Chemical mapping of a 207-nucleotide RNA with 2A3 and DMS. Values are in units of 0.01, from 0 to 300, in steps of 10. DMS adducts were read by reverse transcription with MarathonRT. The reactions ran in a buffer of 150 mM KOAc, 10 mM MgCl2 and 150 mM bicine (pH 8.5), at 24 C.
RNA sequence: GGGAACGACUCGAGUAGAGUCGAAAAAGGAAUGAUAGUGUUGGCUGCGGUUUCUACGAAACCUCCGCCUUCUUGUGGGUAUCCACCGUACAGUACGCUUGAUUCGUAAACAUCGUCGCCGAGUAUGCUGCGUAGACUUUUAGCUACAUCCUCGCCGGACCCAUAUCAUAUUCGUAUGAUAUGGGUCAAAAGAAACAACAACAACAAC
Reactivity to 2A3 in 0.01 (KOAc 150mM, MgCl2 10mM, bicine 150mM(pH8.5), 24C), signal-to-noise 4, nucleotides 027 to 156: a020g080g010a080a030u080g060a080u050a100g120u130g050u070u060g020g030c000u010g000c040g060g000u060u020u000c120u220a080c120g000a010a000a010c000c010u010c000c000g000c010c000u000u050c020u030u100g010u060g010g000g030u100a090u070c030c020a020c030c000g020u080a070c020a080g020u040a060c060g030c070u060u080g020a040u120u080c020g050u080a000a180a000c050a140u070c060g070u040c030g020c090c000g000a000g020u040a020u100g030c010u020g040c020g050u030a040g060a160c100u050u070u030u190a020g000c000u000a010c020a040u010c010c020u020c030g020c020c010g050
Reactivity to DMS in 0.01 (KOAc 150mM, MgCl2 10mM, bicine 150mM(pH8.5), 24C), signal-to-noise 2, nucleotides 027 to 156: a050g010g000a050a080u000g000a120u000a090g030u010g020u000u000g010g020c050u010g070c090g000g030u000u000u010c010u010a090c150g000a030a040a070c020c000u000c010c090g000c030c040u000u010c040u010u000g020u000g000g010g040u000a070u020c050c030a040c030c000g000u010a050c080a080g000u000a040c070g050c020u010u010g000a230u000u000c040g000u010a050a100a100c100a100u000c060g030u020c030g060c040c000g020a070g030u000a040u000g010c000u010g000c060g000u000a100g010a130c120u010u020u010u010a130g010c050u000a070c030a070u010c030c020u000c040g000c030c040g010